[RMDB]
RNA sequence: GGGAACGACUCGAGUAGAGUCGAAAACGAAAUCCAAAGACAAGGUUCUCACAGAGGAAAAAGGUGAAGGAAAUUCUUAGGAUGGUAGCCAACAGGAGUCCCAGUCCAAGUCAGGCCUAGAGAGCAACCAUUCCAGCCAGACUGAAUCAGGAUGAAGCGCAUAGGAGUAUUUCGAUACUCCUAUGCGAAAAGAAACAACAACAACAAC
Reactivity to 2A3 in 0.01 (KOAc 150mM, MgCl2 10mM, bicine 150mM(pH8.5), 24C), signal-to-noise 2, nucleotides 027 to 156: c040g000a030a020a010u040c020c020a090a030a020g040a040c040a050a000g030g020u050u010c020u020c020a080c050a040g120a090g020g050a050a120a030a010a000g050g000u030g040a030a020g070g000a010a080a070u110u010c030u020u090a050g010g010a010u020g060g010u040a010g040c020c000a030a020c020a110g030g020a020g010u020c000c020c010a020g020u000c020c000a030a020g080u070c050a040g010g000c000c020u110a090g010a020g010a000g070c020a050a040c040c010a030u080u060c020c010a010g020c020c000a020g010a040c020u050g040a030a040u100c010a010g030g000a020u160g080a050a000g050
Reactivity to DMS in 0.01 (KOAc 150mM, MgCl2 10mM, bicine 150mM(pH8.5), 24C), signal-to-noise 1, nucleotides 027 to 156: c010g000a060a070a100u010c050c020a050a190a050g000a130c080a150a110g010g010u000u000c010u010c030a100c070a180g020a130g010g020a020a040a050a120a120g010g040u010g020a110a080g000g000a040a070a110u000u000c010u000u000a090g000g020a010u000g030g020u010a040g010c000c000a010a070c070a120g000g010a200g030u000c010c000c010a140g000u000c030c010a020a080g030u010c050a050g050g000c020c030u010a120g010a050g000a060g030c040a110a050c090c030a150u010u000c040c020a080g020c000c040a050g000a100c050u020g040a060a130u000c070a080g030g000a100u000g000a110a130g000
Annotation
Structure probing data (2A3 and DMS) for a 207-nucleotide construct. Values cover nucleotides 27 to 156. Source: RMDB library OK3TST, as collected in RNAgym. For 2A3 the reverse transcriptase was SuperScript II with manganese.